[RMDB]
This 177-nucleotide RNA was probed chemically with DMS and 2A3. Conditions: 150 mM KOAc, 10 mM MgCl2 and 150 mM bicine (pH 8.5), 24 C. For 2A3, 1,671 sequencing reads were counted. 2A3 adducts were read by reverse transcription with SuperScript II with manganese. Values cover nucleotides 27 to 126. It was measured as part of the RMDB library M2PK50.
RNA sequence: GGGAACGACUCGAGUAGAGUCGAAAAUUACCUCCCUUCGGGGAGGUAAACUGAACGCUGCAAGCGGCAGCGCGCACGCUUGCGCACACACGCACAAUAAAAGCAGUAUGCACUUCGGUGCAUACAAACAGCAGGAACAAUUCGUUGUUCCUGCUGUAAAAGAAACAACAACAACAAC
Reactivity to DMS in 0.01 (KOAc 150mM, MgCl2 10mM, bicine 150mM(pH8.5), 24C), signal-to-noise 1, nucleotides 027 to 126: u000u030a030c000c000u000c000c000c010u020u040c190g010g040g000g020a010g000g000u010a000a010a060c060u000g000a070a080c200g010c010u010g020c010a030a020g010c020g060g000c070a100g020c080g000c170g020c000a150c030g010c100u010u000g020c000g030c010a060c100a070c090a150c040g000c080a060c180a080a120u040a020a080a060a060g000c150a050g060u000a000u010g000c010a030c000u000u010c120g000g020u000g000c000a000u010a000c000a010a090
Reactivity to 2A3 in 0.01 (KOAc 150mM, MgCl2 10mM, bicine 150mM(pH8.5), 24C), signal-to-noise 2, nucleotides 027 to 126: u020u000a000c000c000u000c000c000c000u010u010c160g050g000g000g010a000g000g000u000a000a000a000c000u020g060a090a010c060g030c100u180g000c020a000a070g050c020g010g000c030a080g220c050g000c020g040c120a140c130g020c020u010u020g020c010g000c000a000c010a000c010a010c050g140c020a080c060a090a180u150a170a160a020a020g010c050a020g000u000a010u000g010c020a000c010u030u080c170g060g000u000g000c000a000u000a010c010a000a010